[RMDB]
Conditions: 150 mM KOAc, 10 mM MgCl2 and 150 mM bicine (pH 8.5), 24 C. Chemical mapping of a 177-nucleotide RNA with 2A3 and DMS. Reactivities are rounded to 0.1 and cut off at 0 and 3. It was measured as part of the RMDB libraries RFM100 and RFMREP. Reactivities are given for positions 27 through 126.
RNA sequence: GGGAACGACUCGAGUAGAGUCGAAAAAGCUGCCCAGAGUGGCGCAAGCCACAUAUCCCGUGACAUUGCGAAAGCAAGGCUGGCGGUAGGUAGUCCUGGGCGGCGACAGCCUUGGACUGCGGCGUAAUUUGUUCUAUAGGUUCGCCUAUAGAACAAAAAAAGAAACAACAACAACAAC
Reactivity to 2A3 in 0.01 (KOAc 150mM, MgCl2 10mM, bicine 150mM(pH8.5), 24C), signal-to-noise 1, nucleotides 027 to 126: a040g000c030u020g000c000c000c000a050g010a010g000u040g000g000c000g030c060a000a050g030c030c000a010c010a000u110a050u020c000c000c000g030u040g060a070c080a220u050u030g000c010g040a070a040a020g010c010a010a010g050g010c040u030g010g010c000g040g030u060a060g060g110u040a030g010u050c000c010u010g010g000g000c000g000g040c010g000a010c020a010g020c020c010u020u050g030g000a010c020u040g020c040g020g000c020g020u060a110a210
Reactivity to DMS in 0.01 (KOAc 150mM, MgCl2 10mM, bicine 150mM(pH8.5), 24C), signal-to-noise 8, nucleotides 027 to 126: a130g010c020u000g010c060c010c010a040g000a140g020u000g000g010c000g000c290a080a160g010c000c000a000c010a160u010a080u010c040c000c000g020u000g000a100c060a100u010u000g000c000g010a120a080a140g000c010a010a020g000g010c070u000g000g000c020g000g010u020a060g010g020u010a030g000u010c060c000u000g000g010g010c000g000g010c060g000a060c120a100g000c010c000u000u010g000g000a040c040u000g010c040g000g010c100g000u020a080a120